[RMDB]
RNA sequence: GGGAACGACUCGAGUAGAGUCGAAAAAUACAGCGUAAUCGAGCGGAGGAAAACGGCACUCCGAAAAUCCGGUACGAUUAUGAUCCCACUGCGUCGACGCUAGAUGCAGAACCGGAUAGCCGAGGAACCUAAGACUCGUAUUCGUACGAGUCUUAGGAAAAGAAACAACAACAACAAC
Reactivity to DMS in 0.01 (KOAc 150mM, MgCl2 10mM, bicine 150mM(pH8.5), 24C), signal-to-noise 3, nucleotides 027 to 126: a060u010a150c130a070g020c020g020u010a040a070u010c020g000a150g030c020g000g010a030g010g000a040a040a070a100c030g000g040c080a100c070u000c020c010g000a060a040a040a040u000c000c010g010g000u000a100c110g010a060u010u010a020u000g030a090u000c000c000c020a220c030u010g000c000g010u000c000g020a120c210g010c140u000a060g020a010u000g010c000a010g000a140a040c020c000g000g000a040u000a020g020c010c020g000a080g010g030a090a150
Reactivity to 2A3 in 0.01 (KOAc 150mM, MgCl2 10mM, bicine 150mM(pH8.5), 24C), signal-to-noise 3, nucleotides 027 to 126: a000u170a020c080a060g040c010g080u090a100a110u090c040g040a030g140c030g000g050a010g000g040a020a210a020a100c020g010g000c040a000c040u010c000c000g000a050a040a000a000u020c010c010g010g010u090a080c050g050a060u120u090a060u190g070a040u040c000c000c000a030c010u010g000c010g020u020c010g040a070c070g000c270u110a040g000a010u020g030c020a000g050a040a020c000c000g010g000a050u030a020g020c020c030g030a020g060g070a040a050